Annotation: Conditions: 150 mM KOAc, 10 mM MgCl2 and 150 mM bicine (pH 8.5), 24 C. Structure probing data (2A3 and DMS) for a 177-nucleotide construct. Reactivities are given for positions 27 through 126. For 2A3, 1,263 sequencing reads were counted. The data come from the RNA Mapping Database (RMDB), library OK2TRN.
[RMDB]
RNA sequence: GGGAACGACUCGAGUAGAGUCGAAAACUAAGCGCGCGGGCUGGCAGGCUGCGGCGCGUCAAGGUCAGCCUGGAGCUGGGUGGCGGCCUGCCUGGGGGCGGGGGACCCUACUGGAGGCCCGGGCUGGCGGAUAUUUUGAGUUCGCUCAAAAUAUCCGAAAAGAAACAACAACAACAAC
Reactivity to 2A3 in 0.01 (KOAc 150mM, MgCl2 10mM, bicine 150mM(pH8.5), 24C), signal-to-noise 1, nucleotides 027 to 126: c020u030a140a000g030c020g000c040g010c010g040g020g000c010u050g100g030c020a050g050g000c000u300g300c140g040g020c040g000c020g000u040c030a060a040g040g000u000c010a000g020c010c030u060g100g030a140g020c090u140g040g000g030u030g050g000c040g000g060c040c020u010g000c010c010u040g070g000g000g010g010c040g040g000g000g000g060a040c000c020c000u000a060c040u080g130g100a060g020g070c000c000c000g000g030g030c000u000g060g000
Reactivity to DMS in 0.01 (KOAc 150mM, MgCl2 10mM, bicine 150mM(pH8.5), 24C), signal-to-noise 2, nucleotides 027 to 126: c030u000a090a220g010c040g000c020g020c010g000g020g050c030u000g000g040c300a060g000g010c010u000g010c030g000g010c000g030c020g000u000c110a080a090g000g010u010c010a030g000c010c020u010g000g000a120g020c010u000g010g000g010u000g000g020c110g010g010c010c000u000g000c010c020u000g020g000g030g010g000c090g020g000g020g000g010a170c040c010c010u010a050c060u000g000g040a210g010g000c010c000c000g010g000g020c010u000g010g000